[RMDB]
RNA sequence: GGGAACGACUCGAGUAGAGUCGAAAAGAGUCUCCGAUGCCGGCGAGCGUCCCAGUUCCCCACCUUCUAAGGAAAGCUUGGAGAAAGCCAUCUCCGGUGGCACCGUCAACAAACUAGAAGUAAACUGGAAAUAUUAGAGGUUCGCCUCUAAUAUUUCAAAAGAAACAACAACAACAAC
Reactivity to 2A3 in 0.01 (KOAc 150mM, MgCl2 10mM, bicine 150mM(pH8.5), 24C), signal-to-noise 1, nucleotides 027 to 126: g030a010g040u020c030u000c020c010g120a160u140g110c090c030g070g000c060g020a070g050c020g000u030c030c030c030a020g010u000u020c000c010c000c000a060c010c020u040u000c010u080a060a120g020g030a250a050a030g080c060u170u240g000g000a050g000a070a110a020g050c010c020a060u010c030u030c010c070g060g000u050g000g060c040a050c080c010g060u050c000a060a000c020a020a170a070c000u020a010g060a090a010g040u190a120a100a060c050u090g100
Reactivity to DMS in 0.01 (KOAc 150mM, MgCl2 10mM, bicine 150mM(pH8.5), 24C), signal-to-noise 2, nucleotides 027 to 126: g010a170g000u000c020u000c040c020g020a120u000g000c060c040g010g020c060g040a100g000c020g060u010c020c020c010a270g020u000u000c010c010c000c130a140c120c020u010u010c010u000a030a100g000g000a140a140a180g020c060u000u010g040g010a060g000a060a070a110g010c110c090a070u000c020u020c070c060g010g030u000g020g010c040a130c090c030g030u000c070a040a100c090a090a060a090c100u000a020g010a030a030g000u010a030a070a140c140u000g010